This 207-nucleotide RNA was probed chemically with DMS and 2A3. For 2A3 the reverse transcriptase was SuperScript II with manganese. For 2A3, 5,487 sequencing reads were counted.
RNA sequence: GGGAACGACUCGAGUAGAGUCGAAAAAGUUAGGUUCGCUAUGGUGCAACUCUUUAAGGCAAUGACGAACUAAUUCUAAGCAAGUAAUGGAGAAAUGCCAGGGUCACUAUCUAGCCAUAAUAGUGCUGUAAGUGACUUAGAUUCGUCUAAGUCACAACACAGUAUUCUAGUUCGCUAGAAUACUGUGAAAAGAAACAACAACAACAAC
Reactivity to DMS in 0.01 (KOAc 150mM, MgCl2 10mM, bicine 150mM(pH8.5), 24C), signal-to-noise 3, nucleotides 027 to 156: a070g020u000u000a090g020g020u000u000c040g030c040u000a060u000g030g060u000g000c030a070a100c070u000c060u000u010u000a080a070g020g030c060a080a120u000g000a060c050g020a050a070c030u010a060a070u000u010c070u010a120a120g030c060a070a100g020u000a080a080u000g020g000a110g000a070a050a100u000g010c020c030a130g020g030g000u000c050a030c030u000a040u000c020u000a100g000c020c020a060u000a060a080u000a060g010u000g030c020u000g010u000a050a150g010u000g020a030c000u000u010a000g010a080u000u010c300g020u010c020u000a010a000g020u000c000a020c000a020a160
Reactivity to 2A3 in 0.01 (KOAc 150mM, MgCl2 10mM, bicine 150mM(pH8.5), 24C), signal-to-noise 6, nucleotides 027 to 156: a000g080u070u060a040g010g050u030u020c030g000c040u060a040u090g060g000u050g020c040a080a150c050u060c040u130u140u170a090a040g030g000c030a090a120u090g010a040c030g050a120a050c010u020a020a030u070u040c030u120a090a020g070c050a060a050g040u080a070a060u110g050g000a050g030a070a070a010u050g020c020c010a040g020g000g020u040c010a000c030u010a020u130c020u030a010g020c000c010a020u060a150a070u070a120g090u060g050c050u040g050u110a190a060g000u000g010a010c000u000u000a000g000a000u020u050c130g010u000c150u010a000a000g000u000c000a000c000a000a030